An RNA of 177 nucleotides, treated with DMS and read out base by base. For DMS, 1,628 sequencing reads were counted. The data come from the RNA Mapping Database (RMDB), library TTRINS.

RNA sequence: GGGAACGACUCGAGUAGAGUCGAAAAGAUAUGGACGGUCCACUAUAGGCGAGAGACGGGUGGUGUGCGCUCGGAAACGAGCGAACUACACACGCCGUGGAAUGCCUAUAGUGGACCGUCCUAAGUCCUCAAAUGAAUGGUUCGCCAUUCAUUUGAGAAAAGAAACAACAACAACAAC
Reactivity to DMS in 0.01 (KOAc 150mM, MgCl2 10mM, bicine 150mM(pH8.5), 24C), signal-to-noise 2, nucleotides 027 to 126: g020a130u010a300u000g000g010a000c010g010g000u000c000c010a040c000u000a000u000a010g010g030c010g000a080g050a300g010a010c010g000g010g040u010g030g000u000g010u010g000c000g000c000u000c000g000g010a090a110a220c000g000a020g000c010g020a020a040c090u000a200c000a080c020a030c000g010c000c000g010u000g000g040a220a180u010g020c020c000u000a000u000a000g020u000g000g000a010c000c000g010u000c000c000u000a020a080g010u010c070